[RMDB]
RNA sequence: GGGAACGACUCGAGUAGAGUCGAAAAAGUGAGUAUGGCUCGUUACGACGAGCCAUACUCACAACGGUUUUCCUAAAUCGUCGUGAGACGGACCUUGGAAAACCUAGUCUUUAAAUAACUAGGUCAAAUUAGCCUAGAUCCUUCGGGAUCUAGGCAACUUAUCGAUUUGCUUCGGCAAAUCGAUAAGAAAAGAAACAACAACAACAAC
Reactivity to 2A3 in 0.01 (KOAc 150mM, MgCl2 10mM, bicine 150mM(pH8.5), 24C), signal-to-noise 2, nucleotides 027 to 156: a000g000u000g020a000g020u000a000u000g020g000c010u020c020g000u010u110a110c300g020a020c010g000a110g030c020c000a000u000a000c000u000c010a010c000a000a000c030g000g000u010u000u000u000c000c000u000a000a000a000u080c030g000u000c010g000u010g120a110g000a030c010g020g000a000c000c000u000u000g000g000a000a000a000a000c000c000u000a010g020u000c000u030u180u130a060a280a180u150a120a070c130u040a030g000g000u020c020a000a040a230u170u180a050g000c000c000u010a010g000a010u000c000c020u060u140c200g080g000g000a000u030c010u000a000g000g010c000a000a000

Record summary:
Structure probing data (2A3) for a 207-nucleotide construct. The reactions ran in a buffer of 150 mM KOAc, 10 mM MgCl2 and 150 mM bicine (pH 8.5), at 24 C.